RNA sequence: GGGAACGACUCGAGUAGAGUCGAAAAUAGCCAUAUCCUUGACAAAAGUGACAUCACCUGGGUGAUCAGUGUGGAGAUAUGUCACAAUGUCUCCAGUAGGCAGAGCCUAGACAAGAGUUACAUCACCCAUAUCACAGCGGUUCGCCGCUGUGAUAUGAAAAGAAACAACAACAACAAC
Reactivity to DMS in 0.01 (KOAc 150mM, MgCl2 10mM, bicine 150mM(pH8.5), 24C), signal-to-noise 5, nucleotides 027 to 126: u020a120g010c040c040a090u020a070u000c040c040u000u000g010a100c080a090a050a100a130g020u000g010a030c030a040u000c070a070c060c030u000g000g010g000u010g000a060u000c070a050g010u000g020u010g020g010a030g010a020u000a010u000g010u010c270a070c140a090a090u000g010u000c000u000c020c010a050g010u000a030g010g000c020a090g000a180g010c010c010u010a050g020a060c080a100a120g000a090g010u010u000a050c120a090u000c050a060c030c040
Reactivity to 2A3 in 0.01 (KOAc 150mM, MgCl2 10mM, bicine 150mM(pH8.5), 24C), signal-to-noise 3, nucleotides 027 to 126: u050a000g020c000c000a040u050a040u130c030c010u050u110g030a040c040a050a090a050a060g040u030g020a010c010a070u060c010a020c010c010u040g070g000g000u090g060a070u060c040a030g060u040g040u020g160g060a060g010a050u080a040u070g040u030c020a000c010a040a010u020g000u000c000u000c000c010a050g060u070a040g070g090c050a020g020a010g090c020c010u010a030g000a060c070a130a060g030a000g100u060u080a030c020a060u020c030a040c020c010